An RNA of 177 nucleotides, treated with DMS and 2A3 and read out base by base.
For 2A3, 4,094 sequencing reads were counted.
Reactivities are given for positions 27 through 126.
It was measured as part of the RMDB library RFMREP.
The RNA was probed in 150 mM KOAc, 10 mM MgCl2 and 150 mM bicine (pH 8.5) at 24 C.
DMS adducts were read by reverse transcription with MarathonRT.
RNA sequence: GGGAACGACUCGAGUAGAGUCGAAAAACUAAAUGGGACGGGACUCCUGUCCUCUCGAUUGUCGCUCAGCACGGACAGACUAUAAGCCUGAUGGUCGUUCCCCAUCGGGCCUGAAACCGCAGAUCGCCCUUUAGUUUAGGUUCGCCUAAACUAAAGGAAAAGAAACAACAACAACAAC
Reactivity to DMS in 0.01 (KOAc 150mM, MgCl2 10mM, bicine 150mM(pH8.5), 24C), signal-to-noise 4, nucleotides 027 to 126: a080c050u000a050a130a140u020g010g010g000a030c030g010g010g010a180c130u010c030c010u010g010u000c020c010u000c050u000c060g000a080u000u000g020u000c040g010c050u000c010a080g020c060a110c080g000g010a140c060a060g000a110c100u010a210u010a080a130g000c000c010u000g010a060u000g010g000u000c020g010u000u000c000c000c000c020a020u000c030g010g010g000c010c020u000g000a040a080a060c060c040g000c090a110g000a110u010c120g000c160
Reactivity to 2A3 in 0.01 (KOAc 150mM, MgCl2 10mM, bicine 150mM(pH8.5), 24C), signal-to-noise 3, nucleotides 027 to 126: a000c050u070a040a080a030u210g020g000g010a000c020g010g000g150a200c050u110c120c010u050g000u000c000c000u010c010u000c020g080a060u030u180g060u080c020g000c020u040c010a040g010c040a040c050g020g060a030c020a030g040a030c040u080a040u030a300a030g000c010c010u000g010a010u020g000g020u040c010g000u010u000c000c010c000c010a000u010c000g000g000g000c030c000u000g000a110a020a010c010c030g030c030a030g020a200u090c040g060c010